[RMDB]
RNA sequence: GGGAACGACUCGAGUAGAGUCGAAAAGGACCACUGGGCCAGUUGGGUUGGGGCGGCCCAGCGCGCGUACCGAUACUCCCACGCGCACGUCAACGCCGGCGUCGGCCAGUCCGCGACCGAUGAGUUCGACGCCAUCUUAGUUCGCUAAGAUGGCGUCAAAAGAAACAACAACAACAAC
Reactivity to DMS in 0.01 (KOAc 150mM, MgCl2 10mM, bicine 150mM(pH8.5), 24C), signal-to-noise 1, nucleotides 027 to 126: g010g000a070c020c140a210c020u000g020g000g070c000c050a170g040u000u010g010g000g000u000u000g030g000g030g020c070g000g000c040c010c000a000g000c060g010c010g010c040g050u010a110c140c040g010a100u020a100c130u000c000c020c030a170c040g000c000g000c090a170c220g010u010c100a110a180c080g010c110c010g010g010c100g110u010c110g000g000c010c080a050g020u010c000c080g030c100g000a040c050c010g020a090u010g010a140g010u000u000c130
An RNA of 177 nucleotides, treated with DMS and read out base by base.
Source: RMDB library OK2TRN, as collected in RNAgym.
For DMS the reverse transcriptase was MarathonRT.
For DMS, 706 sequencing reads were counted.